[RMDB]
RNA sequence: GGGAACGACUCGAGUAGAGUCGAAAACGGCAAAAAAGCAAACUUGACCACCAAGGAUAAAAGAGAUCUUAUCCAAGGAUGCAAAAGAUAAACUCACUUUUGACACCCACUGAUCUCGAACUUAAAGAAAACCGAGACUACUUCGGUAGUCUCGGAACUUAGGUUGUAACUUCGGUUACAACCUAAGAAAAGAAACAACAACAACAAC
Reactivity to DMS in 0.01 (KOAc 150mM, MgCl2 10mM, bicine 150mM(pH8.5), 24C), signal-to-noise 1, nucleotides 027 to 156: c080g000g000c060a020a000a050a080a010a080g060c020a100a080a170c050u030u000g000a220c100c000a090c040c020a070a240g040g000a080u000a020a060a060a090g000a170g000a090u000c030u000u000a030u000c050c040a090a300g000g000a040u000g040c040a040a090a010a040g000a090u000a040a090a040c060u000c040a040c040u000u000u000u000g000a160c000a040c040c000c000a140c090u010g000a030u000c000u000c010g020a060a050c050u000u010a060a070a180g010a100a030a090a180c000c000g020a020g010a020c000u010a010c010u030u000c290g060g060u000a010g020u000c000u000c000g000g010a000a000
Reactivity to 2A3 in 0.01 (KOAc 150mM, MgCl2 10mM, bicine 150mM(pH8.5), 24C), signal-to-noise 4, nucleotides 027 to 156: c010g040g010c010a050a030a020a020a030a050g110c060a140a100a110c040u050u060g040a160c020c020a030c010c020a050a020g040g000a030u030a070a080a050a010g010a000g000a000u000c010u000u050a030u080c040c030a030a050g010g010a020u070g000c000a020a040a030a020g030a040u170a150a170a060c060u060c090a050c000u090u010u010u020g050a080c000a030c020c020c000a040c100u070g000a010u000c000u010c010g010a070a060c040u120u180a110a070a050g060a030a080a060a020c000c000g010a000g000a010c000u000a000c000u010u050c160g040g000u000a000g000u010c000u000c000g000g000a000a000
Chemical mapping of a 207-nucleotide RNA with DMS and 2A3. It was measured as part of the RMDB library M2RFPK. Reactivities are given for positions 27 through 156. For 2A3, 3,487 sequencing reads were counted.